Source information
This 207-nucleotide RNA was probed chemically with 2A3. The 2A3 profile rests on 435 reads. As a SHAPE reagent, 2A3 marks flexible, mostly unpaired nucleotides at the ribose 2'-OH. Conditions: 150 mM KOAc, 10 mM MgCl2 and 150 mM bicine (pH 8.5), 24 C.
RNA sequence: GGGAACGACUCGAGUAGAGUCGAAAAGGUUUACUGUCACUGGUGGGGGUAGCAGCUCUUUUGUUCUAGCUCUUCAUUUCCAUAAUGCGUGUUCUUUUUUCAUACUUUAGGGGAAAGAAGGAGGAGAACUCUAUUAUUUCUAUGGGGAGAAUUCCUCCCUCCAUAGAGCGUUCGCGCUCUAUGGAGGAAAAGAAACAACAACAACAAC
Reactivity to 2A3 in 0.01 (KOAc 150mM, MgCl2 10mM, bicine 150mM(pH8.5), 24C), signal-to-noise 1, nucleotides 027 to 156: g000g000u070u020u050a050c060u060g010u060c050a020c060u090g030g010u020g000g070g000g030g010u020a020g020c070a010g000c010u070c000u040u100u080u080g060u110u020c070u020a080g050c010u000c000u090u040c060a180u010u010u080c030c030a050u020a110a000u070g070c070g050u070g000u030u040c000u090u060u120u000u040u090c070a040u070a180c010u040u080u110a100g070g130g010g010a000a020a040g190a030a040g030g030a030g000g030a010g000a000a010c000u010c010u070a210u230u060a040u010u300u000c060u090a100u050g010g000g100g050a040g030a140a010u210u080c000c060u070c040